Structure probing data (DMS and 2A3) for a 177-nucleotide construct. The RNA was probed in 150 mM KOAc, 10 mM MgCl2 and 150 mM bicine (pH 8.5) at 24 C. Values cover nucleotides 27 to 126. For DMS the reverse transcriptase was MarathonRT. It was measured as part of the RMDB library M2PK90.

RNA sequence: GGGAACGACUCGAGUAGAGUCGAAAAAUCUUGGCGAAGUCAGCGCGGAAGGAGCGCGCAACUCCUUACCCUCGCCUUUUUUAUUCCGCUCCCGUUCGCGAAAGCGUUCAGCGGAAAAGGGACCAAAUCUACUUUAGGAAUUCGUUCCUAAAGUAGAAAAAGAAACAACAACAACAAC
Reactivity to DMS in 0.01 (KOAc 150mM, MgCl2 10mM, bicine 150mM(pH8.5), 24C), signal-to-noise 8, nucleotides 027 to 126: a040u010c070u000u000g010g010c010g010a040a100g010u010c150a090g030c130g020c250g010g000a040a020g000g010a030g010c030g010c290g000c200a090a120c010u000c000c010u000u000a140c060c010c030u000c020g010c010c000u000u000u000u000u000u000a120u020u000c010c010g000c010u000c100c080c050g000u000u010c000g020c020g000a100a090a150g010c000g020u000u000c020a040g000c010g000g000a010a010a060a090g000g010g010a160c080c070a050a090a140
Reactivity to 2A3 in 0.01 (KOAc 150mM, MgCl2 10mM, bicine 150mM(pH8.5), 24C), signal-to-noise 4, nucleotides 027 to 126: a000u050c030u030u060g020g010c020g030a050a020g140u150c080a040g070c040g010c060g060g020a040a030g020g020a030g010c070g000c030g000c070a020a140c010u010c010c000u030u100a300c020c000c010u000c020g020c000c000u050u040u000u000u030u050a130u030u000c000c010g000c010u030c020c050c020g000u000u010c000g000c010g040a100a040a020g000c010g000u010u020c020a010g000c010g010g000a010a010a000a020g050g010g020a030c070c030a020a050a090
The DMS profile rests on 10,203 reads.